[RMDB]
Structure probing data (2A3) for a 177-nucleotide construct. 2A3 adducts were read by reverse transcription with SuperScript II with manganese. Conditions: 150 mM KOAc, 10 mM MgCl2 and 150 mM bicine (pH 8.5), 24 C.

RNA sequence: GGGAACGACUCGAGUAGAGUCGAAAACAAGAUUAGCUUCUCCACUUCCAAACGUAAUUCUGGAUCCAGGGCAGAAGUUGGUUCAUCGUAGCCAAUGAUUUCUGGGUCAAUCAUCAUAGCACGCGCCCGACCUAGUCCACUUCGGUGGACUAGGUCGAAAAGAAACAACAACAACAAC
Reactivity to 2A3 in 0.01 (KOAc 150mM, MgCl2 10mM, bicine 150mM(pH8.5), 24C), signal-to-noise 2, nucleotides 027 to 126: c050a040a010g100a180u240u250a060g000c050u080u050c050u050c000c000a070c000u120u090c030c000a110a160a150c030g130u160a070a170u090u080c040u200g060g010a000u000c010c000a000g000g000g100c110a100g120a120a000g060u020u020g010g010u120u020c000a240u120c300g160u230a000g000c000c030a000a000u040g010a040u050u050u030c000u000g020g000g050u000c020a000a060u030c000a000u010c000a000u020a060g090c050a000c130g080c000g000c010c000